This 177-nucleotide RNA was probed chemically with DMS and 2A3.
Conditions: 150 mM KOAc, 10 mM MgCl2 and 150 mM bicine (pH 8.5), 24 C.
Source: RMDB library OK1LIB, as collected in RNAgym.
DMS adducts were read by reverse transcription with MarathonRT.
RNA sequence: GGGAACGACUCGAGUAGAGUCGAAAAUCGAGCAUCCAAGAUGAUCAACUAUAGCGGUUUUGCAUAUUUGAUGCACUUGGCAUAAACUUAAUAAACUUUGCCCCCAGUUACAGGUUAUAAACCCGGCGUCCACUGAAAAUUUCGAUUUUCAGUGGACAAAAGAAACAACAACAACAAC
Reactivity to DMS in 0.01 (KOAc 150mM, MgCl2 10mM, bicine 150mM(pH8.5), 24C), signal-to-noise 2, nucleotides 027 to 126: u040c110g000a100g000c200a140u000c000c000a010a000g000a060u030g020a080u000c000a030a000c100u010a020u000a160g030c030g010g000u040u010u030u080g040c000a040u010a000u000u000u000g000a030u000g030c070a030c000u020u000g000g000c300a050u010a060a040a070c050u020u030a110a090u070a050a080a180c070u000u060u000g000c020c000c000c020c060a060g000u030u000a130c180a080g000g000u000u020a090u000a030a130a160c010c000c000g010g000c300
Reactivity to 2A3 in 0.01 (KOAc 150mM, MgCl2 10mM, bicine 150mM(pH8.5), 24C), signal-to-noise 5, nucleotides 027 to 126: u100c020g020a020g050c030a030u050c000c000a000a000g020a120u290g000a010u010c010a010a040c010u010a030u070a140g030c060g190g040u170u160u220u300g010c010a000u010a000u000u010u060g020a020u060g060c030a000c010u020u000g040g000c020a070u070a050a090a030c060u070u120a090a010u140a110a160a040c020u080u120u110g000c020c010c000c010c010a000g010u000u040a050c010a040g050g040u030u040a110u160a190a110a050c000c010c000g070g000c030